Overview:
An RNA of 177 nucleotides, treated with 2A3 and DMS and read out base by base. For 2A3 the reverse transcriptase was SuperScript II with manganese.
[RMDB]
RNA sequence: GGGAACGACUCGAGUAGAGUCGAAAAGGGUAGAUCUUCGGAUCUACCCAAAAGGAGCAACCUACGAAGGAAGUGCUAGCAUAAGCGUGCAGGCUAGCACUAAAAGGUUCCGCUUCGGCGGAACCAAGCAUCUAAUAAACUUCGGUUUAUUAGAUGCAAAAGAAACAACAACAACAAC
Reactivity to 2A3 in 0.01 (KOAc 150mM, MgCl2 10mM, bicine 150mM(pH8.5), 24C), signal-to-noise 5, nucleotides 027 to 126: g010g000g000u010a000g000a010u020c010u060u070c260g030g010a000u000c000u000a000c000c000c000a000a010a000a000g030g010a080g040c010a030a050c010c000u060a080c090g130a100a040g130g060a070a020g010u000g000c000u000a000g000c010a080u060a300a040g100c070g140u130g050c080a010g050g030c000u010a000g000c000a000c000u000a000a000a000a010g000g000u000u010c000c000g000c020u030u030c200g070g000c000g000g000a000a000c000c000a000a010
Reactivity to DMS in 0.01 (KOAc 150mM, MgCl2 10mM, bicine 150mM(pH8.5), 24C), signal-to-noise 4, nucleotides 027 to 126: g010g000g010u000a000g000a000u000c000u000u020c210g010g010a000u000c000u000a000c000c000c000a000a010a060a060g010g000a110g020c080a070a220c020c030u010a070c190g000a110a100g020g010a130a040g010u000g000c000u000a000g000c000a080u010a070a090g010c070g020u000g020c070a120g010g000c010u000a000g000c000a000c000u000a010a030a070a080g020g000u000u000c000c000g000c000u000u000c180g050g000c000g010g010a000a010c000c010a020a080